[RMDB]
RNA sequence: GGGAACGACUCGAGUAGAGUCGAAAAGAUAUGGAAUGUGUCCUGAUGGGAGAUGGAAUUCGGAAACGAAUUUCAUCGAAGAACAUCAGGAGCACAUUCCUAAGUCAAAGAGAGGUUCGCCUCUCAACAAACAUUACGUCUUCGGACGUAAUGUUUGAAAAGAAACAACAACAACAAC
Reactivity to DMS in 0.01 (KOAc 150mM, MgCl2 10mM, bicine 150mM(pH8.5), 24C), signal-to-noise 3, nucleotides 027 to 126: g000a040u000a300u010g000g020a010a000u000g020u010g000u000c000c000u020g010a020u000g000g000g000a120g020a010u000g020g000a000a010u000u000c010g000g000a140a100a250c010g010a010a000u010u010u010c000a010u000c000g000a060a150g000a130a160c020a000u000c000a010g010g000a060g000c000a000c000a010u000u000c000c010u000a030a080g000u000c020a110a100a110g020a000g010a020g010g010u000u010c300g000c000c020u000c000u000c000a070a160
Reactivity to 2A3 in 0.01 (KOAc 150mM, MgCl2 10mM, bicine 150mM(pH8.5), 24C), signal-to-noise 2, nucleotides 027 to 126: g040a010u090a040u150g000g000a020a000u000g010u000g030u010c000c010u010g010a020u000g040g030g030a050g020a010u010g000g020a000a020u010u020c010g040g060a090a050a050c030g020a000a000u000u010u010c000a000u010c010g000a010a010g010a010a000c000a010u000c020a000g010g030a030g000c000a000c000a010u000u000c000c000u000a040a020g030u020c050a030a300a010g000a010g020a010g030g030u130u190c300g100c060c010u000c000u010c000a000a020